[RMDB]
RNA sequence: GGGAACGACUCGAGUAGAGUCGAAAAACUAAUCCAAAGCAAGUAUAGGAGAACAGGUUUUUAACUAUUUUUAGGCAGAUAAAAAAUAGUAUUUGACAGUCUAACACUAAGUGAACAAUAAGUGUUAAAAACUCCCUCCUGUUCGCAGGAGGGAGAAGUCUAGUCUAGUGUUCGCACUAGACUAGACAAAAGAAACAACAACAACAAC
Reactivity to 2A3 in 0.01 (KOAc 150mM, MgCl2 10mM, bicine 150mM(pH8.5), 24C), signal-to-noise 2, nucleotides 027 to 156: a010c050u080a100a030u060c020c020a040a050a030g040c030a000a040g010u050a070u090a100g050g000a030g010a110a080c130a140g080g000u020u000u020u000u010a060a010c000u000a010u000u000u010u030u050a020g060g060c010a040g050a150u130a030a070a000a000a000a000u010a010g030u030a090u030u030u020g010a000c020a010g040u000c020u020a000a000c000a000c000u020a080a060g030u010g080a070a010c030a040a060u040a080a010g020u010g010u030u030a030a110a020a020a020c000u000c000c000c000u030c010c000u010g010u030u040c160g010c080a010g000g000a000g000g010g000a000g000a000a000
An RNA of 207 nucleotides, treated with 2A3 and read out base by base. For 2A3, 1,044 sequencing reads were counted. For 2A3 the reverse transcriptase was SuperScript II with manganese.